[RMDB]
RNA sequence: GGGAACGACUCGAGUAGAGUCGAAAAGAGUGUGACGAGGAGUGUUCUGAAGUAGAGGCUUCAGAUUUAGAAGAAGGUGAAUCAGAGUGCAUUUCUGAGACUUCAACUGAACAAGUUGACGUUUCUCCGAACCCACACUUCGGUGUGGGUAAAAGAAACAACAACAACAAC
Reactivity to DMS in 0.01 (KOAc 150mM, MgCl2 10mM, bicine 150mM(pH8.5), 24C), signal-to-noise 2, nucleotides 027 to 129: g020a000g010u030g020u010g000a080c170g050a090g040g020a040g030u070g030u000u000c030u000g020a010a010g050u000a100g050a000g060g040c040u050u030c030a080g010a090u050u040u070a090g040a060a150g020a000a000g070g000u020g030a080a100u040c100a080g020a060g030u000g070c170a000u040u020u010c070u040g000a050g010a080c050u040u010c030a020a030c030u050g000a000a000c190a150a060g020u050u000g000a060c270g030u000u000u000c060u040c030c060g000a060
Reactivity to 2A3 in 0.01 (KOAc 150mM, MgCl2 10mM, bicine 150mM(pH8.5), 24C), signal-to-noise 5, nucleotides 027 to 129: g040a020g030u080g000u020g010a040c020g000a020g000g020a000g050u080g150u080u000c020u000g010a000a000g000u120a000g030a090g150g040c010u010u010c000a020g000a080u090u080u120a040g000a040a000g000a020a000g100g050u190g080a060a030u060c000a000g020a030g060u090g090c070a100u060u130u000c020u020g020a020g010a030c010u000u020c020a030a030c040u040g000a080a020c110a160a090g000u000u000g000a010c030g000u000u060u030c020u000c020c030g050a070
Description
An RNA of 170 nucleotides, treated with DMS and 2A3 and read out base by base. For DMS the reverse transcriptase was MarathonRT. The reactions ran in a buffer of 150 mM KOAc, 10 mM MgCl2 and 150 mM bicine (pH 8.5), at 24 C. Source: RMDB library 15KLIB, as collected in RNAgym.